The data come from the RNA Mapping Database (RMDB), library POS240. Structure probing data (DMS and 2A3) for a 307-nucleotide construct. The RNA was probed in 150 mM KOAc, 10 mM MgCl2 and 150 mM bicine (pH 8.5) at 24 C.
RNA sequence: GGGAACGACUCGAGUAGAGUCGAAAAGUUGAUGGCUUCGGCCAUCAACACCGCCGCGUGAGCGGCGGACACUCACGUACGCGUGAGUGACAACAGACUACGGUCUGUUGACAGUCGCUUCGGCGACUGAACUCUAACUUCGGUUAGAGAAGCAUGAACUACGGUUCAUGCACAUAGUUACUACGGUAACUAUGAGUCAGACGUACGCGUCUGACACGAUACCACGUGAGUGGUAUCGACGCUCCUCGCUUGAGCUUGAGGCGGCUACAGGAGCGUUCGCGCUCCUGAAAAGAAACAACAACAACAAC
Reactivity to DMS in 0.01 (KOAc 150mM, MgCl2 10mM, bicine 150mM(pH8.5), 24C), signal-to-noise 2, nucleotides 027 to 266: g000u010u010g000a000u000g000g000c000u000u010c220g010g010c000c010a000u020c010a010a000c000a130c020c000g040c120c010g080c060g010u020g000a300g030c070g020g050c010g030g000a090c020a000c000u000c000a010c000g010u000a110c170g040c030g010u000g000a010g020u000g000a300c020a000a000c000a000g000a030c010u020a150c240g050g000u010c000u010g010u000u000g000a300c020a000g000u000c000g000c010u000u050c170g030g020c000g020a000c000u000g010a130a220c020u000c000u000a000a020c030u000u020c210g010g010u000u000a010g000a010g000a120a060g020c000a000u000g010a020a010c000u000a070c210g030g000u000u000c020a000u000g000c000a150c000a000u000a000g020u000u000a000c000u000a100c190g030g020u000a000a000c010u000a000u000g010a160g020u010c010a000g030a020c030g000u010a090c160g020c020g020u020c000u000g000a010c000a070c030g000a000u000a000c020c020a000c010g010u010g000a190g010u000g000g010u000a000u000c000g000a150c130g000c010u000c020c020u010c040g000c020u000u010g000a140g000c080u000u000g040a040g000g030c120g010g010c180u010a180
Reactivity to 2A3 in 0.01 (KOAc 150mM, MgCl2 10mM, bicine 150mM(pH8.5), 24C), signal-to-noise 6, nucleotides 027 to 266: g000u000u000g000a010u000g000g000c020u040u090c300g110g000c000c000a000u000c000a000a000c000a010c000c000g000c010c000g010c050g040u160g120a200g020c010g000g010c000g000g010a000c000a000c000u000c000a000c010g050u070a030c280g020c000g140u000g000a010g000u010g020a020c000a000a000c000a000g000a000c010u020a020c260g100g010u000c000u000g010u000u010g040a020c010a000g000u000c000g020c020u070u070c220g120g000c000g010a000c000u000g020a080a060c000u000c000u000a000a010c000u020u040c120g100g000u000u000a000g010a000g000a030a020g010c000a000u000g000a000a000c000u030a030c260g110g000u000u000c000a000u000g010c000a000c000a010u000a000g000u000u000a000c010u010a020c240g130g010u010a000a000c000u010a000u010g060a060g010u000c000a000g000a010c000g030u080a020c270g030c010g110u000c000u000g000a000c000a000c020g000a000u010a000c000c000a010c040g070u110g130a060g000u000g020g000u000a000u000c000g000a000c040g000c010u020c000c010u030c030g070c060u110u180g180a100g070c010u060u130g030a020g050g030c060g050g040c010u110a040